[RMDB]
Structure probing data (2A3) for a 207-nucleotide construct.
For 2A3 the reverse transcriptase was SuperScript II with manganese.
The RNA was probed in 150 mM KOAc, 10 mM MgCl2 and 150 mM bicine (pH 8.5) at 24 C.

RNA sequence: GGGAACGACUCGAGUAGAGUCGAAAACGCAACGUCGUCGUGCCCGGGCACCCUGCGGCGGCACUCGAGCAGAACGCCGGCGCCGACAUCGAGACAGGCGAACGACCGGUGUUCGUCUGCGGUGGCGACGAUCGACCCGGGCCGCGCGAGGACUGCCUACUAGGCGUAGGUUCGCCUACGCCUAGUAAAAAGAAACAACAACAACAAC
Reactivity to 2A3 in 0.01 (KOAc 150mM, MgCl2 10mM, bicine 150mM(pH8.5), 24C), signal-to-noise 1, nucleotides 027 to 156: c020g000c030a120a040c080g160u020c000g010u040c030g160u260g030c000c000c000g010g020g000c040a100c180c030c090u270g020c010g100g070c050g070g050c030a040c010u070c030g180a080g000c080a020g050a010a010c000g040c000c000g100g020c030g070c020c000g000a020c000a030u090c040g130a030g030a120c080a010g000g030c010g000a000a000c010g160a110c170c070g180g000u210g000u060u010c000g040u000c000u030g010c000g000g000u030g000g030c030g000a050c010g020a030u070c030g020a150c000c000c000g010g000g000c000c000g020c000g030c010g000a080g020g020a060c050u000g020c000c000